[RMDB]
The data come from the RNA Mapping Database (RMDB), library OK1LIB.
Chemical mapping of a 177-nucleotide RNA with 2A3 and DMS.
For DMS, 5,436 sequencing reads were counted.
In probing experiments dimethyl sulfate is read out at A N1 and C N3, which are open when not base-paired.
Conditions: 150 mM KOAc, 10 mM MgCl2 and 150 mM bicine (pH 8.5), 24 C.

RNA sequence: GGGAACGACUCGAGUAGAGUCGAAAAUUUCAGCUAACAUGUCCCAAGAAGUUCUCACAUGGACAAUCACUUUUCCAAGAUAGAUUAGCUUGUUGGUGGCAUUCACCAAGGAACUAUUGGAGUGGCGCACCUAGAUAUCGUUCGCGAUAUCUAGGUGAAAAGAAACAACAACAACAAC
Reactivity to 2A3 in 0.01 (KOAc 150mM, MgCl2 10mM, bicine 150mM(pH8.5), 24C), signal-to-noise 6, nucleotides 027 to 126: u050u060u080c040a030g010c030u090a130a040c010a090u130g070u090c000c000c020a010a010g080a040a000g010u040u010c070u020c010a110c040a090u120g050g060a050c010a040a050u090c020a040c090u070u090u160u090c050c040a070a020g060a130u070a030g080a070u140u120a070g040c040u050u090g050u070u040g040g020u020g010g060c200a200u160u280c020a030c020c000a020a010g070g020a030a020c010u020a080u040u080g020g000a050g000u050g030g000c040g000
Reactivity to DMS in 0.01 (KOAc 150mM, MgCl2 10mM, bicine 150mM(pH8.5), 24C), signal-to-noise 4, nucleotides 027 to 126: u020u020u020c060a090g000c070u010a030a070c110a050u030g000u000c040c000c030a140a060g010a120a100g000u020u000c050u000c110a140c140a060u010g000g000a050c150a060a060u010c030a080c030u010u000u030u000c060c040a050a130g000a100u040a090g000a040u030u010a090g000c050u000u010g010u010u020g000g020u000g000g010c230a100u010u060c030a030c040c000a030a040g010g000a020a040c070u000a090u010u000g000g000a060g040u000g020g000c070g010